Annotation:
This 177-nucleotide RNA was probed chemically with 2A3 and DMS. The data come from the RNA Mapping Database (RMDB), library OK2TRN. Conditions: 150 mM KOAc, 10 mM MgCl2 and 150 mM bicine (pH 8.5), 24 C.
[RMDB]
RNA sequence: GGGAACGACUCGAGUAGAGUCGAAAAAUAGCUGUAUCUUUCUCAAGGAUGCAGAAUGGCUGCCGCAGUCUCAAACACUGCGUGUGUGUUCAAAUCAUGAAGAAAGGAGAUUGAGUGAUGCCAGCUAGCAAUCAUAGCUGUUCGCAGCUAUGAUUGCAAAAGAAACAACAACAACAAC
Reactivity to 2A3 in 0.01 (KOAc 150mM, MgCl2 10mM, bicine 150mM(pH8.5), 24C), signal-to-noise 1, nucleotides 027 to 126: a000u060a020g010c000u000g010u010a000u020c000u000u120u040c070u000c050a040a060g040g020a000u000g000c020a000g080a020a070u040g010g040c030u030g030c020c020g000c020a010g030u000c000u000c070a090a140a000c020a020c000u040g030c030g010u050g000u000g040u010g000u040u010c030a100a150a090u090c060a040u110g110a090a080g100a110a090a020g160g040a050g020a060u040u090g040a010g070u090g030a020u100g020c080c030a000g000c020u010a040
Reactivity to DMS in 0.01 (KOAc 150mM, MgCl2 10mM, bicine 150mM(pH8.5), 24C), signal-to-noise 2, nucleotides 027 to 126: a100u000a100g000c000u000g000u010a120u000c000u010u010u020c050u010c070a140a080g000g010a030u000g020c050a100g010a120a090u000g020g050c010u000g020c200c020g000c000a010g010u020c040u000c250a090a090a080c300a050c060u000g030c060g030u000g000u000g000u010g000u020u010c180a020a120a080u010c080a030u010g000a050a080g000a050a080a020g020g000a040g000a060u000u000g000a050g000u000g010a140u010g010c070c000a020g020c120u000a100